This 177-nucleotide RNA was probed chemically with 2A3 and DMS. For DMS, 13,057 sequencing reads were counted. The 2A3 profile rests on 11,394 reads. It was measured as part of the RMDB library OK1LIB. High DMS reactivity at an A or C suggests that its Watson-Crick edge is free. For DMS the reverse transcriptase was MarathonRT. The RNA was probed in 150 mM KOAc, 10 mM MgCl2 and 150 mM bicine (pH 8.5) at 24 C.
[RMDB]
RNA sequence: GGGAACGACUCGAGUAGAGUCGAAAAUAUCGCGCGUGGUUAUCCGAGCGGCUUGGUAUCUAAAUGGAUGCGAGAAAACAUCAAAGUACGAUGGCAAAAACGGCUGAAUGUCCCUGUCCGUGCGCACAAUAAUCGUUUUCUUCGGAAAACGAUUAUUAAAAGAAACAACAACAACAAC
Reactivity to 2A3 in 0.01 (KOAc 150mM, MgCl2 10mM, bicine 150mM(pH8.5), 24C), signal-to-noise 8, nucleotides 027 to 126: u200a030u060c050g010c010g000c000g030u070g020g050u140u110a060u060c020c030g020a030g050c020g020g000c020u020u060g110g010u050a040u030c030u090a070a160a130u200g100g020a020u020g000c020g010a080g050a080a110a030a030c010a020u040c040a120a090a010g050u050a040c100g020a040u050g030g040c060a010a020a060a090a050c020g030g000c020u050g050a140a030u100g040u020c010c000c000u010g050u000c010c010g020u030g030c020g000c020a020c010
Reactivity to DMS in 0.01 (KOAc 150mM, MgCl2 10mM, bicine 150mM(pH8.5), 24C), signal-to-noise 5, nucleotides 027 to 126: u040a030u030c030g000c050g000c040g020u010g000g000u010u030a060u020c060c030g010a070g000c060g000g010c030u010u000g030g020u010a040u020c030u020a080a120a120u020g020g020a060u010g020c040g010a130g000a070a070a110a170c040a040u020c040a060a100a090g040u020a070c130g000a050u000g010g000c090a020a050a080a100a080c080g010g010c050u010g000a080a090u020g000u000c010c010c000u010g010u000c020c020g010u000g000c060g010c050a080c180